[RMDB]
The record gives the reactivity of an RNA of 177 nucleotides to DMS and 2A3. For 2A3 the reverse transcriptase was SuperScript II with manganese. Conditions: 150 mM KOAc, 10 mM MgCl2 and 150 mM bicine (pH 8.5), 24 C. The 2A3 profile rests on 5,022 reads. High DMS reactivity at an A or C suggests that its Watson-Crick edge is free.
RNA sequence: GGGAACGACUCGAGUAGAGUCGAAAAGUCGCGGCGCAUGGAGCUGGCGAUCUACUGCGCGUCGCGAGCGCUGGAGUCGUUCGCGCUGUGCCUGGUGGAGUGGGGCCUGGCGCGCCGGCGUGACGUGCCUUAGGAUCACGUUCGCGUGAUCCUAAGGAAAAGAAACAACAACAACAAC
Reactivity to DMS in 0.01 (KOAc 150mM, MgCl2 10mM, bicine 150mM(pH8.5), 24C), signal-to-noise 2, nucleotides 027 to 126: g020u000c020g010c000g010g000c000g030c040a110u000g010g010a130g010c040u000g010g010c070g000a100u000c020u000a070c030u010g000c090g000c020g010u000c000g000c020g020a040g000c040g000c030u000g030g010a100g020u010c030g020u000u000c030g010c020g010c030u000g030u000g000c030c110u000g010g010u000g020g010a080g010u010g020g010g010g000c020c000u000g000g010c020g020c020g030c120c010g010g000c040g020u000g000a080c070g010u010g000
Reactivity to 2A3 in 0.01 (KOAc 150mM, MgCl2 10mM, bicine 150mM(pH8.5), 24C), signal-to-noise 3, nucleotides 027 to 126: g040u020c000g000c020g010g010c000g030c040a070u190g070g070a070g050c070u070g070g060c060g040a060u010c010u110a180c080u060g030c020g000c000g040u030c000g000c030g020a020g020c020g020c020u170g120g080a080g050u170c010g050u090u110c020g000c000g000c020u060g020u060g000c000c030u110g030g050u100g040g070a100g040u160g010g030g040g020c000c020u030g020g000c020g000c010g000c060c000g030g010c010g030u050g010a010c030g020u090g010